[RMDB]
RNA sequence: GGGAACGACUCGAGUAGAGUCGAAAAUCGCGUAUUCGUACGCGAAAAAAACCUUUGUGCAUGGAGUCAUAUUGGGAAGACCCUGCCCAUUGGGCAGGGAUAACUUCCAGGUGACGUUGAAAUGCACUCUGGUAAAAAAGCACAUUUCGAUGUGCAAUGAAUUGACGUAAUUCGUUACGUCAAUUCAAAAAGAAACAACAACAACAAC
Reactivity to DMS in 0.01 (KOAc 150mM, MgCl2 10mM, bicine 150mM(pH8.5), 24C), signal-to-noise 2, nucleotides 027 to 156: u000c000g060c020g030u000a050u000u010c300g040u000a010c000g000c000g010a000a000a040a100a050a060a050c000c010u000u000u010g010u000g000c000a030u010g000g000a300g010u000c000a030u000a110u000u000g040g020g000a020a020g000a180c000c010c010u010g000c040c010c000a300u000u010g060g030g020c000a010g010g010g000a000u000a040a090c010u000u010c010c010a080g000g020u000g000a000c000g010u020u000g000a110a140a010u000g000c000a000c000u010c020u000g030g010u010a000a050a060a120a070a200g000c010a030c020a000u010u000u000c160g010a080u000g020u000g000c000a140a110
Reactivity to 2A3 in 0.01 (KOAc 150mM, MgCl2 10mM, bicine 150mM(pH8.5), 24C), signal-to-noise 4, nucleotides 027 to 156: u040c000g000c010g000u010a030u030u110c250g030u050a010c010g000c010g050a090a010a000a000a000a000a010c010c000u020u010u000g000u000g000c000a000u010g010g040a020g020u000c010a010u060a300u240u250g130g030g040a020a000g190a270c000c000c000u020g000c020c010c050a300u120u300g000g010g000c000a010g000g000g000a010u010a010a020c000u000u000c000c000a000g000g020u010g000a000c000g060u120u040g020a020a040a010u000g000c000a000c000u000c000u000g000g000u040a110a040a020a020a000a010g030c010a010c010a010u090u150u150c220g100a030u020g000u000g000c020a010a040
An RNA of 207 nucleotides, treated with DMS and 2A3 and read out base by base. The data come from the RNA Mapping Database (RMDB), library RNAMAK. Conditions: 150 mM KOAc, 10 mM MgCl2 and 150 mM bicine (pH 8.5), 24 C. DMS adducts were read by reverse transcription with MarathonRT.